[RMDB]
RNA sequence: GGGAACGACUCGAGUAGAGUCGAAAAUUCUCUGCCUCCGCGGUUUUUCUUCGAUUCGGAGCGGCUCAUCCCGGCGAAGGGCGGCGGUCCUCAGUACUCUUACUCUUUUCUGUAAAGAGGAGACUGCUGGACGCUCCGCCCAGGCUAGGGCAUGGGCGGCCAGUAAAAGGUUCGCCUUUUACUGGCCAAAAGAAACAACAACAACAAC
Reactivity to 2A3 in 0.01 (KOAc 150mM, MgCl2 10mM, bicine 150mM(pH8.5), 24C), signal-to-noise 1, nucleotides 027 to 156: u000u000c000u000c050u040g040c020c040u020c000c000g000c060g040g080u080u130u010u190u110c040u130u150c000g080a060u190u100c030g010g010a000g050c030g050g060c010u010c000a000u000c000c000c000g000g000c000g070a230a140g000g000g000c000g000g040c060g000g000u020c000c000u020c000a060g030u190a300c040u010c020u110u210a300c010u030c000u000u130u080u080c150u300g210u300a020a030a000g010a000g000g000a010g000a030c000u000g060c020u000g010g010a000c040g090c110u000c010c010g020c000c000c000a000g010g000c010u190a100g000g010g000c010a020u000g000g010g020c000